Annotation:
An RNA of 207 nucleotides, treated with 2A3 and read out base by base. The RNA was probed in 150 mM KOAc, 10 mM MgCl2 and 150 mM bicine (pH 8.5) at 24 C. Reactivities are given for positions 27 through 156.
RNA sequence: GGGAACGACUCGAGUAGAGUCGAAAAUUAAUGAAGCAAAUCUCCAGACGCCAACGAUGAGCGUUUCGCAAUCGCCGCUUAAGGCUUUUGCCGAGGCUGCUUGAGCCUUGUUACCAAAGAAAAGCCGAAAACCCAAAUGUCUUCGGACAUUUGGGAAGGACGUAUGAAAGUUCGCUUUCAUACGUCCAAAAGAAACAACAACAACAAC
Reactivity to 2A3 in 0.01 (KOAc 150mM, MgCl2 10mM, bicine 150mM(pH8.5), 24C), signal-to-noise 2, nucleotides 027 to 156: u110u120a070a090u170g070a030a010g090c110a140a080a150u040c030u000c030c010a020g000a050c010g070c000c000a140a010c120g150a170u120g010a020g050c020g020u040u100u110c020g000c010a010a030u000c000g040c060c020g070c110u200u190a090a140g010g000c070u000u020u000u000g000c010c000g000a000g010g000c030u090g000c000u050u050g020a000g000c000c000u000u020g050u100u080a060c020c010a030a000a000g040a010a030a020a010g000c010c020g130a050a050a060a060c030c000c000a010a000a000u020g000u000c000u010u040c080g040g010a000c000a010u000u000u010g000g000g000a000a000